This 207-nucleotide RNA was probed chemically with 2A3 and DMS. For DMS, 5,544 sequencing reads were counted. For DMS the reverse transcriptase was MarathonRT. For 2A3 the reverse transcriptase was SuperScript II with manganese. The RNA was probed in 150 mM KOAc, 10 mM MgCl2 and 150 mM bicine (pH 8.5) at 24 C. It was measured as part of the RMDB library M2RFPK.
RNA sequence: GGGAACGACUCGAGUAGAGUCGAAAAGGGACUGGCCCGAUGAAGCCCGGCAACCUAACUUUAUUUAAGCGUAAACUGAAGGUGCUAAUUCCAGCAAAAUGGUGUAUUCCGUUUUGGUAGAUAAGAGAAGCGUGACAUGAGUUCGCUCAUGUCACAAGUGUGAUGUAAAGUUCGCUUUACAUCACACAAAAGAAACAACAACAACAAC
Reactivity to 2A3 in 0.01 (KOAc 150mM, MgCl2 10mM, bicine 150mM(pH8.5), 24C), signal-to-noise 6, nucleotides 027 to 156: g020g000g010a030c030u030g040g020c030c020c010g010a040u100g060a040a020g040c000c000c000g000g030c060a100a110c000c000u050a060a090c040u070u110u120a140u110u200u190a130a030g080c030g030u060a060a030a020c040u040g070a050a010g010g010u010g000c000u020a060a060u110u030c040c020a000g010c030a050a010a010a040u050g020g010u070g030u150a090u110u070c010c010g000u010u000u030u020g040g010u060a080g040a190u110a120a080g070a020g050a180a010g090c070g070u000g000a000c000a000u000g000a000g020u040u040c100g020c070u000c000a000u000g000u000c000a000c000a000a000
Reactivity to DMS in 0.01 (KOAc 150mM, MgCl2 10mM, bicine 150mM(pH8.5), 24C), signal-to-noise 3, nucleotides 027 to 156: g020g010g000a090c050u010g010g010c010c000c010g030a250u000g000a110a120g010c000c020c030g010g010c020a080a050c000c020u000a080a050c050u000u000u010a080u020u000u000a040a080g010c040g040u010a070a090a170c040u000g000a120a140g020g030u000g010c010u000a070a160u010u000c020c010a080g000c020a010a030a020a050u010g010g030u010g020u010a110u000u020c000c010g030u000u000u000u010g020g000u000a020g030a050u010a070a150g010a160g010a090a100g010c110g010u000g000a020c000a010u010g010a050g000u000u020c300g030c010u010c000a000u000g000u000c000a000c000a000a050